[RMDB]
Structure probing data (2A3 and DMS) for a 170-nucleotide construct. The reactions ran in a buffer of 150 mM KOAc, 10 mM MgCl2 and 150 mM bicine (pH 8.5), at 24 C. For 2A3 the reverse transcriptase was SuperScript II with manganese.

RNA sequence: GGGAACGACUCGAGUAGAGUCGAAAAAUUUUGAUGUCUGAAGACGUUAAGUUAAACCCUUCAGAAGAUUUUAUAAAGCACGUCCGCACUAAUGGUGGUUACAAUUCUUGGCAUUUAGUCGAGGGUGAAAGCCCUUACUUCGGUAAGGGCAAAAGAAACAACAACAACAAC
Reactivity to 2A3 in 0.01 (KOAc 150mM, MgCl2 10mM, bicine 150mM(pH8.5), 24C), signal-to-noise 3, nucleotides 027 to 129: a010u090u090u060u060g030a040u070g050u000c000u050g040a050a040g040a000c080g030u060u100a010a000g020u020u090a060a040a010c000c000c000u050u050c030a040g000a020a010g040a050u050u060u070u030a210u070a040a050a000g070c030a000c030g050u000c000c000g000c000a030c010u000a010a100u100g050g010u000g020g030u020u020a030c050a050a050u030u010c030u030u000g020g000c000a070u110u090u170a020g000u010c040g010a000g020g000g000u010g030a080a030a000
Reactivity to DMS in 0.01 (KOAc 150mM, MgCl2 10mM, bicine 150mM(pH8.5), 24C), signal-to-noise 3, nucleotides 027 to 129: a140u000u030u000u040g030a030u000g000u020c010u000g000a050a050g020a060c160g030u000u000a030a080g030u000u000a040a050a050c010c020c010u000u000c000a050g010a060a100g020a050u030u020u040u010a020u000a010a000a000g020c050a040c090g030u020c020c050g000c030a030c070u000a030a080u020g030g050u010g020g030u000u000a080c090a120a070u000u000c000u070u000g000g000c000a220u020u010u030a080g030u040c040g050a000g010g010g020u010g010a040a040a080

It was measured as part of the RMDB library 15KLIB. For 2A3, 6,735 sequencing reads were counted.